[RMDB]
RNA sequence: GGGAACGACUCGAGUAGAGUCGAAAAGAUAUGGAUGGAAGUAGACAUGAAGCUGCUCGGAAACGAGCAGACUUCAACAGCUACCUGCCAUCCUAAGUCAAAAGGUUGUGGCUUCGGCCACAACCAACAGUAUCAAGGUCUUCGGACCUUGAUACUGAAAAGAAACAACAACAACAAC
Reactivity to DMS in 0.01 (KOAc 150mM, MgCl2 10mM, bicine 150mM(pH8.5), 24C), signal-to-noise 2, nucleotides 027 to 126: g000a010u000a170u020g000g010a030u020g000g050a130a050g020u000a000g010a110c110a180u040g020a020a010g010c010u000g000c010u000c000g020g000a020a010a100c000g000a000g000c000a030g000a060c000u000u000c000a050a100c290a210g000c010u000a010c000c030u000g030c000c010a010u020c000c000u000a030a130g000u010c010a110a130a100a200g010g010u000u000g030u000g000g000c000u000u010c300g010g000c000c000a000c000a000a000c000c010a030a040
Reactivity to 2A3 in 0.01 (KOAc 150mM, MgCl2 10mM, bicine 150mM(pH8.5), 24C), signal-to-noise 1, nucleotides 027 to 126: g020a000u090a010u090g000g000a000u010g000g010a040a050g020u020a000g020a110c190a300u260g010a000a010g010c000u020g000c000u000c000g000g000a020a030a000c010g000a000g000c000a010g020a030c000u020u010c010a050a020c070a040g030c000u020a010c000c010u100g220c000c000a000u000c000c000u010a030a010g050u010c030a060a020a000a300g010g000u000u000g030u000g010g030c060u090u170c300g100g020c020c000a000c000a020a010c010c000a000a000